Chemical mapping of a 177-nucleotide RNA with DMS and 2A3. For DMS the reverse transcriptase was MarathonRT. It was measured as part of the RMDB library OK1LIB. The RNA was probed in 150 mM KOAc, 10 mM MgCl2 and 150 mM bicine (pH 8.5) at 24 C. For DMS, 2,810 sequencing reads were counted.
[RMDB]
RNA sequence: GGGAACGACUCGAGUAGAGUCGAAAACGGAUGCAAUCAACCAGGUGGUGCCUGAUGUGCUCGAGACGGUCGGCCUGUCUGGCAAAGCUAAUCGGCUGCCGGACGAGCUGUCAGGAGGCGAGCAGCACACGGAUGCUGGAUUCGUCCAGCAUCCGUGAAAAGAAACAACAACAACAAC
Reactivity to DMS in 0.01 (KOAc 150mM, MgCl2 10mM, bicine 150mM(pH8.5), 24C), signal-to-noise 2, nucleotides 027 to 126: c070g000g000a050u030g010c010a100a050u030c130a080a120c060c000a170g020g010u020g010g010u010g000c070c000u000g000a010u020g000u040g060c040u010c010g000a080g020a210c000g000g000u060c090g030g000c020c010u020g000u030c090u020g000g000c030a080a110a110g000c020u000a070a060u050c170g020g000c010u000g010c000c000g000g000a030c010g010a040g000c040u020g000u010c010a080g010g010a140g000g040c050g000a050g000c070a070g010c000a160
Reactivity to 2A3 in 0.01 (KOAc 150mM, MgCl2 10mM, bicine 150mM(pH8.5), 24C), signal-to-noise 5, nucleotides 027 to 126: c020g050g000a030u080g030c070a020a120u090c040a070a090c020c000a030g090g060u120g040g040u120g140c000c010u050g000a070u010g090u150g070c000u000c000g100a140g040a090c040g020g020u260c040g030g000c000c000u030g030u040c070u030g030g020c030a100a070a060g000c020u060a070a150u190c070g000g000c000u020g000c000c000g000g020a020c000g000a000g020c000u010g000u040c010a030g020g010a020g050g000c030g000a010g000c010a010g030c020a040